[RMDB]
RNA sequence: GGGAACGACUCGAGUAGAGUCGAAAAUUGCGCUUGCCUAUUUAGGCAUACUUCUCAGGAUGGCGCGUUGCAGUCCAACAAGGUCCAGGGACUGUACAGAAUUUUCCUAUACCUCGAGUCGGGUUUGAAAACGUUAGGCACUUCGGUGCCUAACGAACUGACAGAAAUGGUUCGCCAUUUCUGUCAGAAAAGAAACAACAACAACAAC
Reactivity to 2A3 in 0.01 (KOAc 150mM, MgCl2 10mM, bicine 150mM(pH8.5), 24C), signal-to-noise 3, nucleotides 027 to 156: u010u060g010c010g010c050u050u070g020c000c000u130a230u240u280u300a050g000g010c000a010u050a050c030u110u150c080u070c190a120g110g040a200u170g030g010c000g010c010g000u010u060g000c000a010g000u000c020c030a050a040c090a270a250g230g040u100c050c060a040g020g010g000a000c000u000g010u000a020c020a040g150a070a030u000u000u000u020c000c010u060a080u020a080c030c060u010c010g010a010g000u000c020g000g000g040u060u050u070g110a070a060a000a000c000g000u010u000a000g000g000c010a010c000u010u050c250g090g000u000g030c010c010u000a000a000c000g000a000a000